The record gives the reactivity of an RNA of 177 nucleotides to DMS and 2A3. For DMS the reverse transcriptase was MarathonRT. The data come from the RNA Mapping Database (RMDB), library OK1LIB. For DMS, 74,263 sequencing reads were counted.
RNA sequence: GGGAACGACUCGAGUAGAGUCGAAAACGGUGACAGUCCUCCUUGUAAGAGGAUCUAGGACGUAGAGAGGGCGGGUCAGAGCGCCGAUGCCCUAGAUCAGGCGCGCGAGAAGUUAUGGCGAGGACUAGACUGUUCCUUCGUUCGCGGAGGGGCAGUCAAAAGAAACAACAACAACAAC
Reactivity to DMS in 0.01 (KOAc 150mM, MgCl2 10mM, bicine 150mM(pH8.5), 24C), signal-to-noise 9, nucleotides 027 to 126: c080g010g010u020g010a080c140a100g000u000c000c000u000c000c020u010u000g010u040a090a130g000a060g000g000a030u010c040u010a030g010g010a050c030g020u010a080g010a150g020a110g010g000g000c040g010g000g000u010c160a090g010a150g010c020g000c010c010g000a060u010g000c040c020c010u000a030g000a030u000c020a110g010g000c020g000c070g010c050g000a090g010a090a080g010u010u010a060u020g000g000c090g000a040g000g000a040c050u000a100
Reactivity to 2A3 in 0.01 (KOAc 150mM, MgCl2 10mM, bicine 150mM(pH8.5), 24C), signal-to-noise 9, nucleotides 027 to 126: c020g010g030u090g060a030c030a030g010u000c000c010u020c010c010u070u070g090u140a100a040g040a050g100g000a010u010c010u020a010g010g020a010c050g050u070a020g040a010g030a040g090g030g030c020g010g010g020u090c050a020g020a030g070c020g010c010c010g010a030u080g020c000c000c000u010a010g010a030u030c030a030g070g010c010g000c010g000c020g070a050g030a110a040g040u120u110a060u150g030g010c030g010a020g010g000a010c000u010a040